[RMDB]
RNA sequence: GGGAACGACUCGAGUAGAGUCGAAAAUUAAGGCACAUAAUUGUGCUUUGAGCUUUGAUUAGAUGUAAUCAAAUACAAUGACAAGAACACUGCACUUUCUUGUGUGACAUCGCUUACAGUGGACCCACAGUACACGGUGGCGCGAAACUGUGCUAUCUCCAUGGGAUUUAUUCGUAAAUCCCAUGGAAAAAGAAACAACAACAACAAC
Reactivity to 2A3 in 0.01 (KOAc 150mM, MgCl2 10mM, bicine 150mM(pH8.5), 24C), signal-to-noise 5, nucleotides 027 to 156: u100u030a030a020g030g140c010a010c010a010u200a130a140u300u090g000u020g000c020u010u010u010g020a020g030c020u030u060u050g050a060u090u070a160g100a240u130g100u140a040a020u050c050a010a040a000u200a050c060a080a080u120g020a010c000a060a040g030a040a020c070a030c070u100g020c020a030c050u050u040u020c020u040u070g010u030g020u020g090a080c010a100u090c040g010c040u060u090a010c010a030g020u010g020g050a070c040c030c000a020c010a050g080u100a050c070a020c110g060g010u000g010g000c060g020c030g060a000a000a090c050u010g010u010g040c020u040a050u040c020
Reactivity to DMS in 0.01 (KOAc 150mM, MgCl2 10mM, bicine 150mM(pH8.5), 24C), signal-to-noise 2, nucleotides 027 to 156: u010u000a040a050g000g000c010a000c000a110u000a140a130u010u000g020u000g020c000u000u000u000g000a080g040c130u010u020u010g010a050u000u000a110g000a190u010g010u000a060a020u000c050a030a040a140u010a120c100a060a070u020g010a110c050a070a080g010a090a150c040a060c060u000g010c030a100c090u000u000u010c050u010u010g010u000g040u000g000a030c060a040u000c050g020c030u000u000a040c040a090g050u010g020g010a130c060c040c080a130c040a090g000u010a090c100a040c010g060g030u010g010g010c050g010c040g000a140a040a040c090u000g010u000g010c010u000a080u010c020
Structure probing data (2A3 and DMS) for a 207-nucleotide construct.
The RNA was probed in 150 mM KOAc, 10 mM MgCl2 and 150 mM bicine (pH 8.5) at 24 C.
High DMS reactivity at an A or C suggests that its Watson-Crick edge is free.
2A3 adducts were read by reverse transcription with SuperScript II with manganese.
Source: RMDB library OK3TST, as collected in RNAgym.